The record gives the reactivity of an RNA of 177 nucleotides to DMS. It was measured as part of the RMDB library OK1LIB. For DMS, 1,105 sequencing reads were counted. Values are in units of 0.01, from 0 to 300, in steps of 10.
RNA sequence: GGGAACGACUCGAGUAGAGUCGAAAAGUUGAAGAAGCCGGAACUAUUGCUGCCCACGUUGCCAACGCCCGACACGGUACCGGUACCGGCGUUGAAGAAUCCCGACGACGGGGUGGUCGUCGAGUUCCAGCCGGAGAAGGUUCGCCUUCUCCGGCUGAAAAGAAACAACAACAACAAC
Reactivity to DMS in 0.01 (KOAc 150mM, MgCl2 10mM, bicine 150mM(pH8.5), 24C), signal-to-noise 1, nucleotides 027 to 126: g000u000u000g020a010a100g010a150a110g000c000c000g000g040a040a090c150u000a110u000u000g000c010u000g020c020c070c000a100c090g000u050u030g000c050c000a050a140c170g050c010c010c070g000a120c080a070c030g000g040u030a070c000c020g000g010u000a160c000c100g000g000c020g020u000u000g000a120a220g000a140a000u000c000c010c000g000a150c070g050a000c000g000g000g010g030u090g020g010u000c010g000u010c050g000a070g000u020u000c070